The record gives the reactivity of an RNA of 177 nucleotides to 2A3 and DMS. The data come from the RNA Mapping Database (RMDB), library OK1LIB. Reactivities are rounded to 0.1 and cut off at 0 and 3. The RNA was probed in 150 mM KOAc, 10 mM MgCl2 and 150 mM bicine (pH 8.5) at 24 C. The DMS profile rests on 6,077 reads.
[RMDB]
RNA sequence: GGGAACGACUCGAGUAGAGUCGAAAAGUCGGGAUUGUUUAUGGUGGUCGUUGAAGUCAUAACCAUAAGAUGAGCGUUGGAUUGCGGAAGAUUUAUGAAAGUUUAUCAUAGGAAUUGGGCGACCGAGCUAUAAUUAUUUUUUCGAAAAUAAUUAUAGAAAAGAAACAACAACAACAAC
Reactivity to 2A3 in 0.01 (KOAc 150mM, MgCl2 10mM, bicine 150mM(pH8.5), 24C), signal-to-noise 2, nucleotides 027 to 126: g050u030c020g040g000g050a070u000u100g060u100u130u070a030u080g030g020u030g000g020u040c010g000u030u030g080a080a000g030u060c010a040u050a130a040c010c010a020u040a130a040g020a030u110g020a040g030c010g020u050u050g020g040a090u040u090g020c030g020g020a040a000g010a100u070u080u030a090u120g060a060a100a030g060u070u090u060a060u050c010a000u040a030g090g000a060a060u110u130g020g000g000c000g000a020c000c010g000a000g000
Reactivity to DMS in 0.01 (KOAc 150mM, MgCl2 10mM, bicine 150mM(pH8.5), 24C), signal-to-noise 3, nucleotides 027 to 126: g000u000c010g000g000g000a140u010u010g000u020u010u020a050u010g010g020u010g010g020u000c030g010u010u020g000a080a100g020u010c060a080u020a090a080c050c050a060u030a040a080g010a090u000g000a090g030c040g010u010u010g010g000a100u010u040g010c040g000g030a080a090g010a100u020u000u000a020u010g000a070a080a110g000u010u030u020a050u010c010a050u010a080g010g010a050a050u020u000g000g000g000c030g000a100c020c070g000a070g020